[RMDB]
RNA sequence: GGGAACGACUCGAGUAGAGUCGAAAAGUUGUUCGUGGCACCCAGCUCUGUGUCGACUCACACGGAAUCGUCGGGUCUUAUGUGUUUGGAUAAGACUUGACUAAACUUAACAAACUCGCUUAAUGUGAUCCCUGCUGGCCGGGCAGCAUUAAGUUAACCAAUUUUCAAGGUUCGCCUUGAAAAUUGGAAAAGAAACAACAACAACAAC
Reactivity to 2A3 in 0.01 (KOAc 150mM, MgCl2 10mM, bicine 150mM(pH8.5), 24C), signal-to-noise 2, nucleotides 027 to 156: g030u020u020g020u040u080c050g010u080g070g000c040a080c010c030c010a020g010c010u020c030u080g090u030g070u070c060g050a050c020u000c050a030c000a000c030g070g030a020a090u060c010g000u000c020g000g020g000u010c000u000u010a030u000g090u000g020u000u050u100g030g020a000u000a000a000g010a000c000u010u000g010a000c000u020a030a040a020c010u100u220a120a000c020a080a060a040c020u010c060g030c000u020u050a030a020u050g080u050g090a300u210c000c010c020u060g000c070u080g150g020c060c030g030g000g000c070a000g000c000a000u000u000a000a000g000u010u030a030a010

Structure probing data (2A3) for a 207-nucleotide construct. For 2A3, 912 sequencing reads were counted. For 2A3 the reverse transcriptase was SuperScript II with manganese. It was measured as part of the RMDB library ARCHII.